RNA sequence: GGGAACGACUCGAGUAGAGUCGAAAAGAUAUGGACGAGCGAGCGAUAAGCUUUGUGUCGGAAACGACAUGAGCUUUUGACGCUCUAGUCCUAAGUCAAAACAUACCAUUGUUCGCAAUGGUAUGAAGUCUGUCAAAGACUUCGGUCUUUGACAGACAAAAGAAACAACAACAACAAC
Reactivity to 2A3 in 0.01 (KOAc 150mM, MgCl2 10mM, bicine 150mM(pH8.5), 24C), signal-to-noise 2, nucleotides 027 to 126: g020a020u050a030u090g030g020a000c000g000a040g120c060g030a130g190c080g100a210u060a300a040g000c000u060u130u260g010u000g020u000c000g000g010a050a010a030c010g000a000c000a000u000g000a000g000c020u100u140u060u240g060a030c000g020c000u000c010u020a030g000u000c010c010u020a060a010g020u010c010a000a000a180a090c010a000u010a000c010c010a000u000u000g010u050u100c300g000c150a000a000u000g000g000u010a000u000g000a010a000
Reactivity to DMS in 0.01 (KOAc 150mM, MgCl2 10mM, bicine 150mM(pH8.5), 24C), signal-to-noise 1, nucleotides 027 to 126: g000a020u020a210u000g000g000a020c030g000a150g000c180g000a020g030c010g010a070u040a000a010g000c000u010u010u020g110u010g000u000c000g040g000a050a030a130c000g010a000c000a030u000g000a000g000c000u000u000u010u000g030a220c000g010c000u000c020u000a190g000u000c010c000u000a050a020g000u000c030a050a090a110a210c020a000u000a010c000c000a010u000u000g020u000u010c240g020c010a000a000u000g000g000u000a000u000g000a070a090